Background
An RNA of 177 nucleotides, treated with 2A3 and read out base by base. The RNA was probed in 150 mM KOAc, 10 mM MgCl2 and 150 mM bicine (pH 8.5) at 24 C.

RNA sequence: GGGAACGACUCGAGUAGAGUCGAAAAAGAUAGCUACACAGCAAACUUGUUUGAUUCAAAUUCAAUUAAACAAAUUGAUAUUAAUGUAAAAACUAAAUAAACACUUAAAAUUAUCAAAUUCAACAUGCAUGUCAAUUCCGUUCGCGGAAUUGACAUGAAAAGAAACAACAACAACAAC
Reactivity to 2A3 in 0.01 (KOAc 150mM, MgCl2 10mM, bicine 150mM(pH8.5), 24C), signal-to-noise 1, nucleotides 027 to 126: a000g010a200u160a010g010c000u040a010c070a000c010a000g010c000a050a030a030c000u070u060g050u000u000u010g010a020u030u010c020a000a110a160u230u000c000a020a020u000u210a010a070a000c000a020a000a020u120u000g000a000u020a120u300u120a240a060u130g020u050a070a070a070a070a070c000u000a000a000a190u020a000a160a000c070a020c050u140u090a170a090a090a240u300u300a090u000c090a000a260a000u080u000c000a020a050c000a160u300g060

Background: It was measured as part of the RMDB library OK1LIB.